[RMDB]
RNA sequence: GGGAACGACUCGAGUAGAGUCGAAAAAAGCUCAUUUUCGAAUGAGCUUGAAGCGUGAACGGAGGAUAACGCAGAAACGCGCCGCUGAACCUCCCAAGCGAAAGAUUAAGGUCUUCGGACCUUAAAAUGGAUCUCUUAUCUUCGGAUAAGAGAUCCAAAAAGAAACAACAACAACAAC
Reactivity to DMS in 0.01 (KOAc 150mM, MgCl2 10mM, bicine 150mM(pH8.5), 24C), signal-to-noise 1, nucleotides 027 to 126: a020a000g020c020u020c030a020u020u000u020u050c170g010a010a020u050g010a000g010c000u000u000g000a090a110g030c030g010u000g000a100a130c280g000g000a030g010g010a090u000a160a250c130g010c040a080g020a070a090a100c130g000c080g040c100c040g020c120u000g030a060a120c010c020u000c000c000c020a100a150g010c060g020a070a100a160g020a120u000u000a000a000g000g000u000c000u000u010c210g060g000a040c000c000u000u000a000a010a090a090